RNA sequence: GGGAACGACUCGAGUAGAGUCGAAAAGAGUUUCACUUCGGUGAAACUCAAAAAGCGUACUACAGGAGGCGUUGUCAGUUUAGUCCCAAAUAGGACGAACUUGGAUUUACGCUACCCACCCUGUAUCGCAAAAAACGUCACAGUUCGCUGUGACGAACGACAGAGGUGGAUUCGUCCACCUCUGUCGAAAAGAAACAACAACAACAAC
Reactivity to 2A3 in 0.01 (KOAc 150mM, MgCl2 10mM, bicine 150mM(pH8.5), 24C), signal-to-noise 1, nucleotides 027 to 156: g010a000g000u000u000u000c020a040c020u070u070c180g010g000u000g020a000a000a000c000u000c000a000a010a010a010a000g030c020g050u140a080c040u000a000c110a020g000g000a000g030g000c000g010u000u000g040u040c020a020g000u000u080u170a120g000u000c060c010c000a130a300a090u300a100g000g000a000c000g000a020a000c000u040u160g010g050a060u100u300u300a000c000g000c010u000a130c010c020c010a110c000c000c000u050g010u000a000u270c150g000c000a000a000a000a000a000a230c000g020u000c050a000c020a000g000u040u130c170g050c120u020g000u000g000a000c000g000a080a010
Structure probing data (2A3) for a 207-nucleotide construct.
Reactivities are given for positions 27 through 156.
Source: RMDB library RNAMAK, as collected in RNAgym.
Conditions: 150 mM KOAc, 10 mM MgCl2 and 150 mM bicine (pH 8.5), 24 C.